[RMDB]
RNA sequence: GGGAACGACUCGAGUAGAGUCGAAAAGAUAUGGAUGUGUGUAGGGAGCGACCCAGUCGGAAACGACUGGGUUCGCGAGGAUCUACCACAUCCUAAGUCAAAAGUACGCAACUUCGGUUGCGUACAAUCUGACUAGGUAGUUCGCUACCUAGUCAGAAAAAGAAACAACAACAACAAC
Reactivity to DMS in 0.01 (KOAc 150mM, MgCl2 10mM, bicine 150mM(pH8.5), 24C), signal-to-noise 1, nucleotides 027 to 126: g000a030u000a030u010g000g000a010u000g020u000g000u010g000u000a000g000g000g010a000g050c000g010a050c010c010c000a010g020u000c000g030g030a020a010a000c010g020a020c000u000g000g010g000u000u000c000g010c010g000a030g010g010a020u020c000u000a000c000c000a010c000a000u000c000c010u000a000a060g010u010c020a110a120a160a210g020u000a000c000g010c010a030a020c010u000u020c300g010g020u000u010g010c010g020u010a000c010a030a090
The record gives the reactivity of an RNA of 177 nucleotides to DMS. Reactivities are rounded to 0.1 and cut off at 0 and 3. For DMS, 2,723 sequencing reads were counted.